[RMDB]
Chemical mapping of a 177-nucleotide RNA with DMS and 2A3.

RNA sequence: GGGAACGACUCGAGUAGAGUCGAAAAACCUAUGGAUUCGUCCAUAGGUGCUGGCGCGCGGCCAUUGUCCUGUCGCGUGUGCGUGGUGGGCGAUAUACGCGCAAUAGUGACAAUUCGUUGUCACUAAUUCAAUUGGUGAGUUCGCUCACCAAUUGAAAAAAGAAACAACAACAACAAC
Reactivity to DMS in 0.01 (KOAc 150mM, MgCl2 10mM, bicine 150mM(pH8.5), 24C), signal-to-noise 3, nucleotides 027 to 126: a020c000c000u000a010u000g000g000a020u000u010c190g020u000c000c000a000u000a000g000g020u000g020c090u000g000g020c090g000c010g010c020g000g000c100c170a050u000u000g000u010c040c020u010g030u000c010g000c010g000u010g020u010g020c030g040u000g000g020u000g000g000g000c000g010a020u000a090u000a090c020g020c010g000c040a120a100u000a000g010u000g000a020c000a010a040u000u010c200g020u010u000g000u000c000a000c000u000a020a070
Reactivity to 2A3 in 0.01 (KOAc 150mM, MgCl2 10mM, bicine 150mM(pH8.5), 24C), signal-to-noise 1, nucleotides 027 to 126: a000c000c000u010a000u000g000g010a010u020u090c170g030u000c070c020a000u000a010g000g000u010g020c090u040g100g120c060g000c000g000c000g060g020c020c030a040u030u080g070u170c010c000u020g040u040c010g000c030g060u110g140u160g130c060g030u030g050g010u040g010g010g010c020g000a010u040a000u020a070c010g010c000g020c000a000a040u070a030g000u010g010a000c000a010a020u060u080c210g090u060u020g010u000c000a010c010u000a010a140
DMS (dimethyl sulfate) methylates the pairing face of unpaired adenines and cytosines.
Source: RMDB library M2PK50, as collected in RNAgym.
Conditions: 150 mM KOAc, 10 mM MgCl2 and 150 mM bicine (pH 8.5), 24 C.
Values cover nucleotides 27 to 126.